[RMDB]
RNA sequence: GGGAACGACUCGAGUAGAGUCGAAAAGGCAAUAACGAACUAAUUCUAAGCAAGUAAUGGAGAAAUGCCAGGGUCACUAUCUAGGCAUAAUAGUGCUUGACAGUAUGAUACUAACUGAACAAUAAGUAAAAGCGCUGGUACUUCGGUACCAGCGCAACACAAGCAACUACUUCGGUAGUUGCUUGUGAAAAGAAACAACAACAACAAC
Reactivity to 2A3 in 0.01 (KOAc 150mM, MgCl2 10mM, bicine 150mM(pH8.5), 24C), signal-to-noise 2, nucleotides 027 to 156: g040g020c040a050a090u110a180a020c080g060a020a010c060u080a070a100u170u020c070u090a040a030g010c020a040a030g030u050a100a010u120g050g010a060g040a060a140a000u020g000c020c020a030g040g000g000u070c050a020c130u110a080u100c030u090a050g030g000c000a010u030a070a030u070a090g060u020g000c030u000u010g030a020c010a000g040u060a030u110g070a010u020a030c010u020a060a030c020u010g040a040a000c010a060a090u110a110a020g010u030a020a080a190a110g000c000g000c010u010g000g000u000a000c000u020u070c300g040g010u010a010c000c000a000g000c000g000c010a000a000